This 170-nucleotide RNA was probed chemically with DMS and 2A3. Conditions: 150 mM KOAc, 10 mM MgCl2 and 150 mM bicine (pH 8.5), 24 C. It was measured as part of the RMDB library 15KLIB. High 2A3 reactivity points to a flexible backbone, as in loops and unpaired stretches.
RNA sequence: GGGAACGACUCGAGUAGAGUCGAAAAGGUGGAGAUGCCAUGCCGACCCGAAGAGGAAGAAGAGGACAUGGACGCGAACCGUGAGUGGAACCCUCGAUCCUUUAUUGGGGGGUACACUCGAGGAGUGGAACUGCCCGCUUCGGCGGGCAGAAAAGAAACAACAACAACAAC
Reactivity to DMS in 0.01 (KOAc 150mM, MgCl2 10mM, bicine 150mM(pH8.5), 24C), signal-to-noise 5, nucleotides 027 to 129: g000g030u000g000g020a080g060a110u070g000c120c080a030u060g040c060c050g030a150c090c000c010g040a150a100g020a040g060g000a000a000g040a090a100g000a000g060g000a030c030a060u040g000g000a070c140g060c040g030a070a040c040c100g050u000g010a030g050u040g070g030a170a200c070c000c000u000c030g050a020u060c270c180u080u060u120a060u060u020g040g030g020g020g000g000u060a090c050a050c060u010c000g000a060g120g000a050g000u100g000g020a090a110
Reactivity to 2A3 in 0.01 (KOAc 150mM, MgCl2 10mM, bicine 150mM(pH8.5), 24C), signal-to-noise 3, nucleotides 027 to 129: g110g000u060g010g040a110g010a140u190g130c090c020a030u070g000c000c010g030a070c060c000c000g040a010a010g020a020g000g060a030a020g000a030a000g030a020g000g010a010c010a050u120g010g010a000c050g000c000g010a070a030c010c000g000u010g000a000g050u040g000g060a100a020c000c000c000u000c000g010a000u070c060c110u080u200u130a110u030u080g010g000g000g000g020g000u030a000c000a010c000u020c000g020a050g000g020a030g000u100g000g010a030a000